[RMDB]
RNA sequence: GGGAACGACUCGAGUAGAGUCGAAAAGUAGCGUUCAACAUCAUUUAUACAAGACAGGCUUUUGCCCUUUUAGUCUUGCUGAACUAGAAUGAGGGAUUUGUGUAGUCGAAAGUCAAGCUGAUCAUUGUCAAGUUUCGUGGAAGUGGAACCUGAAGGACGAUCCGUAGGAUUUCGAUCCUACGGAUCGAAAAGAAACAACAACAACAAC
Reactivity to DMS in 0.01 (KOAc 150mM, MgCl2 10mM, bicine 150mM(pH8.5), 24C), signal-to-noise 1, nucleotides 027 to 156: g010u000a060g030c070g050u000u000c040a000a030c040a080u010c000a040u000u000u000a130u020a300c050a040a090g020a080c070a130g040g000c030u020u000u000u000g040c000c080c060u010u000u000u000a100g020u000c020u000u000g000c040u000g000a080a300c070u010a090g000a050a060u000g000a090g080g030g000a090u000u000u000g040u010g040u010a040g020u010c090g010a020a060a080g030u000c020a040a080g030c070u000g010a000u000c040a120u030u010g010u010c040a040a150g000u000u000u000c070g020u000g000g030a050a140g000u000g000g010a060a040c030c010u000g000a050a080g000g020a160
Reactivity to 2A3 in 0.01 (KOAc 150mM, MgCl2 10mM, bicine 150mM(pH8.5), 24C), signal-to-noise 4, nucleotides 027 to 156: g080u060a030g040c030g030u030u060c080a050a060c010a120u090c020a040u050u100u230a100u070a050c040a030a010g010a020c010a010g020g040c050u110u130u290u300g060c050c000c000u080u080u030u120a010g010u000c010u020u020g050c060u050g030a050a040c010u040a040g070a120a060u070g010a030g040g020g020a020u070u110u080g060u020g000u010a020g010u030c070g110a040a040a030g020u010c020a030a000g000c010u020g030a040u070c040a100u030u130g010u060c010a010a040g020u020u010u080c050g040u070g030g000a060a040g010u030g080g000a020a040c000c010u080g010a060a010g030g030a010